[RMDB]
RNA sequence: GGGAACGACUCGAGUAGAGUCGAAAAGAUAUGGACUGGGACAUGGCUGGACGUCGGAAACGACGUCGCAGCCAACAGCCCAGGUCCUAAGUCAAAAGGGCGUAGGGUCUUCGGACCCUACGCCCAACACCAUUAGUUUGUUCGCAAACUAAUGGUGAAAAGAAACAACAACAACAAC
Reactivity to DMS in 0.01 (KOAc 150mM, MgCl2 10mM, bicine 150mM(pH8.5), 24C), signal-to-noise 1, nucleotides 027 to 126: g010a050u000a300u000g000g010a200c000u000g000g020g000a020c090a160u000g000g030c010u000g010g010a000c000g010u010c000g000g010a090a080a250c020g000a010c000g000u000c000g010c000a010g020c010c010a020a030c160a130g000c010c000c000a030g000g010u000c000c000u000a030a090g000u000c030a090a070a090a120g000g050g080c000g100u000a000g030g070g000u010c000u000u010c210g000g000a040c000c000c000u000a010c000g080c000c000c010a000a040
The record gives the reactivity of an RNA of 177 nucleotides to DMS. DMS adducts were read by reverse transcription with MarathonRT. Conditions: 150 mM KOAc, 10 mM MgCl2 and 150 mM bicine (pH 8.5), 24 C.